[RMDB]
RNA sequence: GGGAACGACUCGAGUAGAGUCGAAAAACGUUCACGAACUCGUACGUUCACUCUCGUACGAGAGAACGAACUCGUGAGUGAACUCGUACGUGUUCUCGAGAACUCACUCGUUCGAGUUCGUACACGAGAGAUCACACGUUCUCGUUCGAGUACGAGAUGUGAUUCCUACAUUCGUGUAGGAAUCACAAAAAGAAACAACAACAACAAC
Reactivity to DMS in 0.01 (KOAc 150mM, MgCl2 10mM, bicine 150mM(pH8.5), 24C), signal-to-noise 1, nucleotides 027 to 156: a110c090g000u000u000c010a100c020g000a100a120c080u010c070g020u000a070c030g070u020u010c030a020c040u000c050u000c000g000u000a020c040g040a060g020a050g050a090a140c010g000a080a030c040u010c000g000u000g020a300g020u000g000a070a100c010u000c020g000u020a040c060g040u000g000u000u010c030u020c020g010a130g000a130a080c100u000c010a010c000u000c000g050u000u000c020g000a090g030u000u000c000g050u020a080c020a080c010g000a030g020a080g020a150u000c070a120c150a150c040g010u010u000c000u000c020g020u000u000c120g020a230g000u000a010c000g010a020g000a000
Reactivity to 2A3 in 0.01 (KOAc 150mM, MgCl2 10mM, bicine 150mM(pH8.5), 24C), signal-to-noise 4, nucleotides 027 to 156: a000c080g090u070u050c030a030c080g030a050a020c040u000c070g020u020a020c030g010u010u030c050a080c040u000c000u000c030g010u020a020c020g000a000g010a010g020a090a010c030g010a020a020c010u010c000g010u020g040a060g010u100g040a100a060c000u000c000g000u030a050c030g080u050g110u220u040c100u060c070g190a170g040a090a040c040u020c040a030c020u070c030g060u100u070c010g000a000g000u010u000c010g010u060a040c010a000c020g010a000g010a010g020a040u120c060a030c020a000c190g040u010u000c000u000c010g060u170u080c070g020a020g020u020a010c020g000a000g010a060

The record gives the reactivity of an RNA of 207 nucleotides to DMS and 2A3.
Source: RMDB library OK3TST, as collected in RNAgym.
Reactivities are given for positions 27 through 156.
2A3 adducts were read by reverse transcription with SuperScript II with manganese.